Source: RMDB library OK1LIB, as collected in RNAgym.
Chemical mapping of a 177-nucleotide RNA with 2A3.
For 2A3, 314 sequencing reads were counted.
Conditions: 150 mM KOAc, 10 mM MgCl2 and 150 mM bicine (pH 8.5), 24 C.
RNA sequence: GGGAACGACUCGAGUAGAGUCGAAAAUAACGAAAAGUCAAUUUUAAAGGGUGAAACACUUUCUUUGACUGGAUUUUAUUUGUCACCCAACUGGAAUCCAUUUAGUAGCAUCAGAUUAAAUGUGAAACCAGCAUCGACUGUUCGCAGUCGAUGCUGGAAAAGAAACAACAACAACAAC
Reactivity to 2A3 in 0.01 (KOAc 150mM, MgCl2 10mM, bicine 150mM(pH8.5), 24C), signal-to-noise 1, nucleotides 027 to 126: u140a000a000c000g000a020a010a010a000g050u000c040a000a080u150u170u060u300a100a140a000g000g020g000u140g120a100a100a000c070a030c000u000u140u000c010u250u000u060g060a060c000u000g100g000a060u020u010u020u010a130u000u020u000g140u160c030a020c000c000c000a000a000c000u030g000g000a100a000u000c000c000a000u000u000u000a050g000u000a000g100c060a080u300c060a100g080a260u050u100a050a050a000u130g110u050g000a030a020a030